[RMDB]
An RNA of 177 nucleotides, treated with 2A3 and DMS and read out base by base. DMS adducts were read by reverse transcription with MarathonRT. The DMS profile rests on 847 reads. The data come from the RNA Mapping Database (RMDB), library TTRDEL. Conditions: 150 mM KOAc, 10 mM MgCl2 and 150 mM bicine (pH 8.5), 24 C.
RNA sequence: GGGAACGACUCGAGUAGAGUCGAAAAGAUAUGGACGCUCUCUGAAUACGCAUAGUUUCUUCGGAAACGAGAAACUAUGAACUACGUGCGGGAGCGUCCUAAGUCAAAACUGCCCUUCGGGGCAGAACCCCGUAUAUCUGUUCGCAGAUAUACGGGGAAAAGAAACAACAACAACAAC
Reactivity to 2A3 in 0.01 (KOAc 150mM, MgCl2 10mM, bicine 150mM(pH8.5), 24C), signal-to-noise 1, nucleotides 027 to 126: g000a010u030a010u070g030g000a000c000g010c000u020c010u020c050u130g130a230a130u300a200c100g010c150a010u000a000g000u040u000u020c040u220u160c010g030g000a030a010a010c030g000a010g040a000a000a000c000u000a000u000g010a050a000c060u200a060c080g020u040g050c000g000g000g000a000g000c000g000u000c000c000u010a000a000g000u010c000a000a020a060a140c010u000g000c000c000c050u000u050c240g050g000g000g000c000a000g000a010a010
Reactivity to DMS in 0.01 (KOAc 150mM, MgCl2 10mM, bicine 150mM(pH8.5), 24C), signal-to-noise 1, nucleotides 027 to 126: g000a040u000a280u000g000g010a010c030g060c010u010c010u010c000u010g080a100a070u000a040c130g020c000a020u000a000g000u000u000u000c010u000u010c000g000g040a060a090a090c010g000a020g000a000a000a000c010u020a000u020g020a120a050c120u020a300c040g000u030g000c070g000g020g020a000g000c020g010u000c000c000u000a000a050g020u000c040a070a050a060a160c000u020g000c010c000c000u000u030c270g030g010g000g000c000a000g000a110a110